Structure probing data (2A3) for a 207-nucleotide construct.

RNA sequence: GGGAACGACUCGAGUAGAGUCGAAAAACGAGUCCGUACGCGGACUCGAAGGGCCCCAGAAGAACAAGGGGCCCAAACCUACCACUCAUUAGAUGCAUGGAAAUCACUAGGUGAUACGUCACCUAGAACACGCUUUUAAGCUUCGGCUUAAAAGCAACCGUAUGACAAGGUUCGCCUUGUCAUACGGAAAAGAAACAACAACAACAAC
Reactivity to 2A3 in 0.01 (KOAc 150mM, MgCl2 10mM, bicine 150mM(pH8.5), 24C), signal-to-noise 2, nucleotides 027 to 156: a000c000g000a010g010u000c000c000g000u040a020c240g000c010g110g000a000c000u000c000g000a000a000g040g020g000c000c000c000c000a110g120a300a000g060a180a000c060a140a120g010g000g000g000c030c000c000a010a010a010c010c000u040a040c000c040a050c030u110c010a090u100u300a080g030a130u140g070c170a040u120g030g090a110a100a100u160c040a020c070u020a010g000g030u030g020a010u010a060c250g040u000c030a020c000c020u020a000g020a010a040c050a010c080g000c000u100u000u000u000a000a000g010c000u000u190c300g030g000c000u000u030a030a000a030a000g000c010a000a000

The data come from the RNA Mapping Database (RMDB), library M2RFPK.